[RMDB]
RNA sequence: GGGAACGACUCGAGUAGAGUCGAAAAAAGGCAAAAGAAAUAAACGGUCUCCGGUAAAGCAUGAUUCCGAAGGGAUGACGUUUCCGGAGGAUCCGAUGGAAAGCCUCCCCGGAUGGAGAAAGUCUAACUAAUGAACCUGGUUCGCCAGGUUCAUUAGAAAAGAAACAACAACAACAAC
Reactivity to DMS in 0.01 (KOAc 150mM, MgCl2 10mM, bicine 150mM(pH8.5), 24C), signal-to-noise 3, nucleotides 027 to 126: a130a030g000g030c000a030a110a120a130g000a100a160a070u000a060a070a190c050g000g000u020c000u000c040c010g010g020u010a020a010a040g000c010a030u040g000a120u000u000c000c000g050a120a140g000g010g000a000u020g000a300c220g000u000u000u060c000c000g030g000a020g000g000a020u040c010c020g000a050u010g010g010a160a090a080g000c010c000u000c070c000c000c090g020g020a090u030g000g010a090g000a110a050a080g020u000c020u000a060a250
Reactivity to 2A3 in 0.01 (KOAc 150mM, MgCl2 10mM, bicine 150mM(pH8.5), 24C), signal-to-noise 2, nucleotides 027 to 126: a000a000g170g010c160a180a150a040a000g230a040a210a060u120a090a170a010c000g010g020u010c030u020c000c010g060g030u060a040a060a000g070c040a040u190g010a030u100u030c020c010g060a090a040g100g000g010a010u030g030a010c030g020u010u000u120c000c000g000g000a010g000g010a040u100c020c000g050a010u010g030g000a060a000a000g000c000c000u010c000c010c000c000g050g000a060u090g050g030a030g040a070a160a000g020u020c030u010a030a030
Structure probing data (DMS and 2A3) for a 177-nucleotide construct.
The RNA was probed in 150 mM KOAc, 10 mM MgCl2 and 150 mM bicine (pH 8.5) at 24 C.
DMS adducts were read by reverse transcription with MarathonRT.